An RNA of 177 nucleotides, treated with DMS and 2A3 and read out base by base. DMS adducts were read by reverse transcription with MarathonRT. For 2A3 the reverse transcriptase was SuperScript II with manganese. Values cover nucleotides 27 to 126.
RNA sequence: GGGAACGACUCGAGUAGAGUCGAAAAGAAAAACAGGAAGAACCUUUGCUCUCAUACACCCCAUUGUAUUGGGUGGGUUGUUCUUGUAUACAUUGUGGGCAGGUUACUUAGGAUGUCCUCAAAGAAAAUGGUAGGACUGGUUCGCCAGUCCUACCAUAAAAGAAACAACAACAACAAC
Reactivity to DMS in 0.01 (KOAc 150mM, MgCl2 10mM, bicine 150mM(pH8.5), 24C), signal-to-noise 1, nucleotides 027 to 126: g000a250a100a000a300a000c070a070g040g000a070a030g000a000a000c000c000u000u000u000g010c040u000c090u000c140a140u030a100c000a020c220c000c050c020a010u080u080g000u000a090u010u020g050g000g170u010g000g000g020u000u000g000u000u000c100u000u000g000u000a060u040a200c080a000u000u000g000u000g000g090g070c000a050g000g000u020u050a130c120u070u000a100g000g010a090u000g010u000c030c000u000c000a010a050a170g000a170a100a150
Reactivity to 2A3 in 0.01 (KOAc 150mM, MgCl2 10mM, bicine 150mM(pH8.5), 24C), signal-to-noise 1, nucleotides 027 to 126: g120a000a070a080a000a020c020a030g070g000a000a020g000a010a020c000c000u000u090u070g040c000u000c000u000c050a000u020a080c000a000c000c070c000c000a140u060u170g070u040a030u000u190g140g000g000u020g120g000g000u000u000g030u040u000c000u030u000g030u000a040u060a060c110a000u060u160g010u130g000g020g000c000a000g060g100u160u010a210c020u090u090a070g220g100a060u030g000u000c000c000u060c000a030a030a010g030a050a120a000